Source: RMDB library RNAMAK, as collected in RNAgym.
Chemical mapping of a 207-nucleotide RNA with 2A3.
2A3 adducts were read by reverse transcription with SuperScript II with manganese.
Reactivities are given for positions 27 through 156.
[RMDB]
RNA sequence: GGGAACGACUCGAGUAGAGUCGAAAAGGGGUCACGAGGGAGAUUCAAGGGAAGCAACAGCCCUACUGAAGCCUCCACGGUAGGGACAUGCUUCCCGAGAAUCGUUGAUCUCGUGACGGAGGCACCCAAAAGAUUUGACCCUUCGGGGUCAAAUCAAGCAAUAGAGACACUUCGGUGUCUCUAUUGCAAAAGAAACAACAACAACAAC
Reactivity to 2A3 in 0.01 (KOAc 150mM, MgCl2 10mM, bicine 150mM(pH8.5), 24C), signal-to-noise 1, nucleotides 027 to 156: g050g000g030g000u010c000a010c000g150a000g020g030g000a020g010a000u000u020c000a000a030g020g000g020a010a000g010c030a070a130c030a170g020c010c020c000u000a000c010u020g030a080a020g000c000c010u010c010c000a000c010g010g010u000a000g010g030g030a020c100a060u300g000c020u020u000c010c030c000g000a020g000a000a000u010c000g000u050u010g000a000u000c010u020c000g000u000g000a010c020g000g000a000g000g010c000a000c000c000c000a030a140a020a030g000a020u000u000u000g000a000c010c000c020u010u140c300g100g000g000g020u010c000a000a000a000u000c000a010a000